[RMDB]
RNA sequence: GGGAACGACUCGAGUAGAGUCGAAAACACUUCUCCGAUGCAGCGGAAGCUUAUAUUGAAAUGAGAAACUCUGAAGGUCCGUAUAUGCCUAGAUACGGAUUACUGAGGAAUUUGAGAGACAGAGAUCCCAUAAGGGAUGCUUCGGCAUCCCUUAUGGAAAAGAAACAACAACAACAAC
Reactivity to 2A3 in 0.01 (KOAc 150mM, MgCl2 10mM, bicine 150mM(pH8.5), 24C), signal-to-noise 1, nucleotides 027 to 126: c010a000c010u080u000c010u000c000c010g030a070u100g000c060a050g040c020g040g030a080a020g000c070u210u060a110u010a030u290u170g120a130a090a130u240g010a060g080a140a040a030c010u010c010u020g020a060a000g070g020u060c000c000g020u000a000u000a000u090g160c080c050u060a050g000a090u000a010c000g010g000a010u000u120a060c010u020g000a010g020g050a020a030u050u010u000g080a120g000a010g010a020c000a020g140a010g000a160u020c000
Reactivity to DMS in 0.01 (KOAc 150mM, MgCl2 10mM, bicine 150mM(pH8.5), 24C), signal-to-noise 2, nucleotides 027 to 126: c120a150c120u000u010c010u000c010c040g030a080u020g000c240a060g020c030g000g040a110a100g010c030u000u000a090u010a110u000u010g010a070a110a120u020g000a140g000a090a050a100c060u000c000u000g000a200a050g010g020u000c000c000g010u000a000u020a070u000g010c090c140u010a120g000a020u000a000c010g000g000a010u000u000a040c020u000g000a250g020g000a040a100u000u000u000g010a080g000a120g000a090c100a070g000a170g000a100u000c070